RNA sequence: GGGAACGACUCGAGUAGAGUCGAAAACGACCGCUCGGAUGGGCCGCUUCCGGCAAGAGGGGCCGAAAGUGUGAAGGGAGAGACCGCUCCGAGAGUUGGGAGAAGAAAGAGAGCGAAUGUGUCCGGAAUACUCGGUCCUUCGGGACCGAGAAAAGAAACAACAACAACAAC
Reactivity to DMS in 0.01 (KOAc 150mM, MgCl2 10mM, bicine 150mM(pH8.5), 24C), signal-to-noise 3, nucleotides 027 to 129: c070g010a100c070c020g030c090u060c060g050g000a000u020g010g000g050c070c060g000c080u050u010c000c000g000g040c000a110a110g000a050g050g000g000g010c050c020g000a030a040a030g030u070g030u050g010a230a030g020g000g010a060g040a170g000a050c050c050g000c110u010c040c020g010a050g020a040g050u040u030g000g060g000a000g030a040a040g000a050a050a050g010a090g000a060g060c070g040a010a140u060g030u060g000u060c020c040g040g000a040a060u090a050
Reactivity to 2A3 in 0.01 (KOAc 150mM, MgCl2 10mM, bicine 150mM(pH8.5), 24C), signal-to-noise 3, nucleotides 027 to 129: c020g050a050c020c000g010c010u000c010g100g030a070u050g020g010g000c010c000g030c040u100u000c000c020g060g010c000a000a000g020a010g060g000g050g000c000c030g000a060a080a000g070u130g010u110g040a070a100g000g010g000a050g000a000g000a050c070c010g070c090u000c060c000g000a020g010a000g040u090u080g050g010g010a100g040a020a000g020a000a020a000g100a000g000a000g020c050g040a060a060u130g030u030g020u070c000c000g000g070a020a020u080a070